[RMDB]
RNA sequence: GGGAACGACUCGAGUAGAGUCGAAAAACAUACAAAUUCGAGGGGACACAAUUUAACCCUUAGCACUCAGUCUGGGCAAGCUCAUCCUGUUCUUGAUAAACAAUGAAAAAAAUAGGUAUAAGAUUGCUACAGAAAGAAGUACGGACUGUCAUAUCAACCCAACUACUACUUUCGAGUAGUAGUUGGGAAAAGAAACAACAACAACAAC
Reactivity to 2A3 in 0.01 (KOAc 150mM, MgCl2 10mM, bicine 150mM(pH8.5), 24C), signal-to-noise 1, nucleotides 027 to 156: a000c100a050u300a040c080a010a130a100u120u120c060g000a030g010g000g030g020a010c010a010c070a150a080u200u130u210a140a060c020c030c000u010u030a050g020c130a010c020u010c000a030g210u000c010u000g000g040g000c000a020a080g000c000u030c010a100u030c010c000u000g020u030u020c010u080u080g040a130u190a060a090a060c120a120a160u210g140a090a060a000a090a000a010a000u030a050g000g000u170a000u020a050a010g010a000u050u030g000c000u090a270c000a030g000a020a110a040g050a030a000g010u120a040c030g010g000a020c010u000g000u050c000a020u070a020u260c120a080a030
About this RNA
Structure probing data (2A3) for a 207-nucleotide construct. Reactivities are given for positions 27 through 156. Conditions: 150 mM KOAc, 10 mM MgCl2 and 150 mM bicine (pH 8.5), 24 C.